[RMDB]
RNA sequence: GGGAACGACUCGAGUAGAGUCGAAAAUUGCCACUUUGUGCUGGCCACCUCGCAUAUUGUCAGUGCAGGAGGAGAUGGGAAGAUUGGCCUUGGUAAGAUUCACAGCACCUUCGCUGCCAAGUACUGGUGUGGGAGAGAAUUUCGAUUCUCUCCCACAAAAAGAAACAACAACAACAAC
Reactivity to 2A3 in 0.01 (KOAc 150mM, MgCl2 10mM, bicine 150mM(pH8.5), 24C), signal-to-noise 1, nucleotides 027 to 126: u080u070g040c020c000a050c040u210u040u080g090u060g000c010u040g020g020c000c020a070c010c030u060c030g050c070a050u090a060u180u250g090u150c100a030g080u000g090c000a010g120g040a020g050g010a060g000a060u150g010g060g050a060a000g050a060u060u190g080g120c050c020u010u050g050g010u090a100a020g040a040u100u090c030a010c010a060g060c020a030c000c010u060u080c150g000c000u010g020c000c010a000a000g030u010a060c020u050g030g000
Reactivity to DMS in 0.01 (KOAc 150mM, MgCl2 10mM, bicine 150mM(pH8.5), 24C), signal-to-noise 2, nucleotides 027 to 126: u020u000g010c000c010a110c140u000u000u010g030u000g030c040u000g000g010c010c140a100c030c040u000c130g000c040a100u010a130u000u010g010u000c140a040g030u010g010c050a070g000g030a110g000g000a090g020a060u010g000g000g000a050a050g000a110u010u010g010g030c080c020u000u000g010g010u010a060a070g010a100u000u000c030a070c060a060g030c070a090c040c070u000u010c110g000c050u010g000c010c040a040a040g000u020a030c110u010g010g000
An RNA of 177 nucleotides, treated with 2A3 and DMS and read out base by base. High DMS reactivity at an A or C suggests that its Watson-Crick edge is free. Conditions: 150 mM KOAc, 10 mM MgCl2 and 150 mM bicine (pH 8.5), 24 C. For 2A3 the reverse transcriptase was SuperScript II with manganese.